The record gives the reactivity of an RNA of 207 nucleotides to 2A3 and DMS. Values cover nucleotides 27 to 156.
RNA sequence: GGGAACGACUCGAGUAGAGUCGAAAACUACGCAUCAACAUCGAGGUCAAAAGUUGAUUGAUAUAGCCGCUAAAAUGGCCGAUGCCGGUGUGGAUACCGUGCCUGUAUUGUUGUCGACUACCACCCAUAACUAUCACAGAAUGGCUGUAUUUGCCGCAUACGUUUAAUUAUUCGUAAUUAAACGUAUAAAAGAAACAACAACAACAAC
Reactivity to 2A3 in 0.01 (KOAc 150mM, MgCl2 10mM, bicine 150mM(pH8.5), 24C), signal-to-noise 5, nucleotides 027 to 156: c030u100a030c040g000c040a040u030c020a030a090c010a070u070c050g060a080g030g090u040c040a050a030a050a090g040u060u070g070a140u040u070g040a010u060a030u080a150g020c020c020g000c050u110a070a030a050a120u060g010g020c010c020g020a020u080g040c030c030g000g030u020g010u040g060g020a040u060a100c020c040g010u060g030c000c020u080g030u080a080u070u070g060u050u050g030u050c020g030a040c020u060a030c020c020a030c010c020c000a040u070a120a070c070u080a060u190c070a040c020a130g120a170a100u090g050g010c010u020g040u140a140u070u110u100g030c010c020g000c020
Reactivity to DMS in 0.01 (KOAc 150mM, MgCl2 10mM, bicine 150mM(pH8.5), 24C), signal-to-noise 5, nucleotides 027 to 156: c030u000a060c030g010c040a070u010c030a070a070c030a070u000c030g010a170g040g010u000c040a060a060a150a110g020u000u000g020a110u010u000g020a150u000a100u010a100g030c020c020g000c070u010a060a050a120a090u000g010g020c020c010g000a070u000g010c010c020g010g040u000g020u000g020g000a160u010a050c080c030g020u000g000c010c010u000g020u000a070u010u000g020u000u000g000u010c000g010a130c020u000a060c040c020a040c020c010c030a090u010a060a090c070u000a100u010c070a130c080a110g000a090a110u010g020g010c010u000g000u000a150u000u000u000g010c010c030g010c200